[RMDB]
Chemical mapping of a 177-nucleotide RNA with DMS and 2A3. The data come from the RNA Mapping Database (RMDB), library OK2TST. The 2A3 profile rests on 1,120 reads. The reactions ran in a buffer of 150 mM KOAc, 10 mM MgCl2 and 150 mM bicine (pH 8.5), at 24 C. Reactivities are given for positions 27 through 126.
RNA sequence: GGGAACGACUCGAGUAGAGUCGAAAAGGCUAAUAUACUUCCAAUGAGCGCUGAUUUAGGAGAAUCCAUGGAAGGUUCUUCUAUCGACGUCACCUUUACCGCUCAAUUAGAAACAGGUGAAACGUUACCACACUUCUUGGUUCGCCAAGAAGUGUGGAAAAGAAACAACAACAACAAC
Reactivity to DMS in 0.01 (KOAc 150mM, MgCl2 10mM, bicine 150mM(pH8.5), 24C), signal-to-noise 1, nucleotides 027 to 126: g030g010c060u000a070a020u000a100u040a090c120u000u010c010c010a070a300u000g000a030g020c000g010c300u000g000a100u000u030u000a010g070g000a030g030a030a000u010c010c070a120u010g010g020a120a180g000g030u000u000c000u000u000c010u000a000u010c180g000a040c050g020u000c050a010c000c000u000u000u000a050c180c020g050c010u000c030a010a070u000u000a040g000a060a060a040c160a030g000g000u000g010a070a040a070c120g000u000u000a220
Reactivity to 2A3 in 0.01 (KOAc 150mM, MgCl2 10mM, bicine 150mM(pH8.5), 24C), signal-to-noise 2, nucleotides 027 to 126: g010g000c060u040a050a010u140a070u060a260c000u080u000c020c020a000a130u080g000a000g050c050g040c160u120g070a140u090u030u150a000g000g000a000g000a020a000u030c060c090a150u190g170g120a180a100g050g000u020u000c000u000u000c000u000a050u080c060g000a010c020g020u000c010a010c000c000u150u150u120a080c010c050g060c020u040c040a030a160u140u120a060g090a120a130a030c050a010g000g000u050g000a140a030a000c010g030u000u020a040